An RNA of 177 nucleotides, treated with 2A3 and DMS and read out base by base. The data come from the RNA Mapping Database (RMDB), library M2PK50. Values are in units of 0.01, from 0 to 300, in steps of 10. Reactivities are given for positions 27 through 126. The RNA was probed in 150 mM KOAc, 10 mM MgCl2 and 150 mM bicine (pH 8.5) at 24 C.

[RMDB]
RNA sequence: GGGAACGACUCGAGUAGAGUCGAAAACCCUUAGCAUUCGUGCUAAGGGAAAUAACGGUCGGCUCAUGCAGCAAGUCGAAAAUGCUGCUCGACCUUUUGGUAAAAUCUGGCCGUUCGCGGCCAGAAAAGACAGAACAGAGUUCGCUCUGUUCUGUCUAAAAGAAACAACAACAACAAC
Reactivity to 2A3 in 0.01 (KOAc 150mM, MgCl2 10mM, bicine 150mM(pH8.5), 24C), signal-to-noise 1, nucleotides 027 to 126: c000c000c010u000u020a000g030c000a000u010u030c170g130u050g020c000u000a020a010g020g000g000a090a090a010u140a080a030c060g020g000u000c000g020g000c030u070c300a040u260g010c010a010g060c000a010a060g130u110c070g110a080a000a020a060u030g000c000u010g030c030u030c000g000a000c020c040u010u070u050u040g030g000u090a010a070a000a150u000c010u000g020g010c030c000g010u050u040c250g020c020g070g000c000c000a000g000a000a010a000
Reactivity to DMS in 0.01 (KOAc 150mM, MgCl2 10mM, bicine 150mM(pH8.5), 24C), signal-to-noise 2, nucleotides 027 to 126: c000c000c000u010u000a000g000c000a070u000u010c190g030u000g010c000u000a020a000g030g000g000a000a030a090u000a050a080c110g000g020u000c000g000g010c130u020c160a070u000g000c000a020g010c010a020a050g020u000c260g000a070a100a070a040u000g000c000u000g010c020u000c000g000a000c020c000u000u000u000u000g000g010u010a070a080a080a100u000c000u000g000g000c000c000g010u000u010c220g030c010g010g000c000c000a010g000a020a000a050